The data come from the RNA Mapping Database (RMDB), library OK1LIB. Structure probing data (2A3) for a 177-nucleotide construct. 2A3 adducts were read by reverse transcription with SuperScript II with manganese.
[RMDB]
RNA sequence: GGGAACGACUCGAGUAGAGUCGAAAAUAAUUGCUAAUACACCGUAUGGCGUUAAACGUAAGACGAACGUCACAAUCGCCAUUACUAGUGAAUAGAUAGCGUCAAUCGCACGCUUAAGCAAUUCACCGACCGCACAUGUCUUCGGACAUGUGCGGUCAAAAGAAACAACAACAACAAC
Reactivity to 2A3 in 0.01 (KOAc 150mM, MgCl2 10mM, bicine 150mM(pH8.5), 24C), signal-to-noise 2, nucleotides 027 to 126: u300a000a010u000u000g000c000u010a060a020u070a220c000a000c000c000g000u000a050u000g000g000c010g000u010u050a090a140a030c040g010u020a000a120g180a100c260g110a260a030c050g030u070c080a070c010a060a020u140c030g040c000c000a000u150u060a000c030u020a010g000u000g040a110a080u140a060g030a060u120a040g010c000g030u040c080a090a300u110c140g010c020a000c000g000c000u010u000a070a000g000c000a000a000u000u000c010a050c090c050